[RMDB]
RNA sequence: GGGAACGACUCGAGUAGAGUCGAAAACGGGGUCACUCAGUGCUAUGGGAGAUUCAUGGUCCUGGAGUAAAGGAAGAGCGUGUUGAACGUAAGUGGAUCACGAGGCAAUUUCAAUCACAGUCAAUAAGCACCUGGACGUGUUCGCACGUUCAGGUGCAAAAGAAACAACAACAACAAC
Reactivity to DMS in 0.01 (KOAc 150mM, MgCl2 10mM, bicine 150mM(pH8.5), 24C), signal-to-noise 2, nucleotides 027 to 126: c020g000g010g000g000u010c060a090c050u000c030a060g000u050g000c000u000a080u050g000g000g000a060g000a140u030u010c000a020u010g000g000u000c030c010u000g000g040a040g010u000a010a080a130g000g020a040a080g060a160g000c040g050u010g000u060u040g000a010a100c120g040u090a060a150g000u010g000g010a090u020c060a010c130g050a060g000g040c040a050a060u000u090u030c040a070a090u000c140a020c100a050g030u010c040a020a130u010a050a100
Reactivity to 2A3 in 0.01 (KOAc 150mM, MgCl2 10mM, bicine 150mM(pH8.5), 24C), signal-to-noise 2, nucleotides 027 to 126: c010g000g000g000g040u070c000a020c000u020c000a000g000u080g070c010u090a070u040g000g020g050a150g040a230u130u090c020a020u010g020g000u050c000c030u030g010g060a010g020u180a050a120a000g020g050a040a000g000a000g010c030g010u100g060u100u130g060a050a000c020g010u160a150a040g050u020g050g030a070u030c030a020c060g030a010g000g060c020a100a090u050u140u150c030a030a080u090c000a020c000a040g070u060c000a000a150u180a170a000
An RNA of 177 nucleotides, treated with DMS and 2A3 and read out base by base. Reactivities are given for positions 27 through 126. DMS adducts were read by reverse transcription with MarathonRT. The data come from the RNA Mapping Database (RMDB), library OK1LIB. The RNA was probed in 150 mM KOAc, 10 mM MgCl2 and 150 mM bicine (pH 8.5) at 24 C.